[RMDB]
Record summary: The record gives the reactivity of an RNA of 207 nucleotides to 2A3. The 2A3 profile rests on 417 reads. 2A3 adducts were read by reverse transcription with SuperScript II with manganese. It was measured as part of the RMDB library OK3TST.
RNA sequence: GGGAACGACUCGAGUAGAGUCGAAAACAAAGCCGAAGAAAUAUGUUGGUCAGGAAGUAGUUCAUCAUGUGCUUUUAAAUCCUCAGGUCUGCUUGGUCCAGCUAAGAGGGAAGCCUGGCUGCAGUUGAGGGCCGAAAUUGAAGCCCUGACCGACUCACCAUGAGCAGGACUUCGGUCCUGCUCAUGGAAAAGAAACAACAACAACAAC
Reactivity to 2A3 in 0.01 (KOAc 150mM, MgCl2 10mM, bicine 150mM(pH8.5), 24C), signal-to-noise 1, nucleotides 027 to 156: c030a030a050a020g040c010c010g180a120a040g060a190a170a050u250a050u120g000u000u000g010g000u010c000a000g000g020a100a150g050u120a080g040u080u120c050a140u010c050a050u200g020u080g070c110u000u000u000u180a090a110a130u070c000c010u020c000a000g070g220u000c010u000g060c000u180u090g060g040u070c000c020a000g010c010u090a180a050g050a040g100g110g030a000a000g000c000c040u000g000g050c010u020g040c000a000g000u040u000g000a010g000g000g070c020c030g050a080a110a080u030u100g040a050a050g000c000c020c000u010g000a000c000c000g000a010c000u010c000a000
Values are in units of 0.01, from 0 to 300, in steps of 10.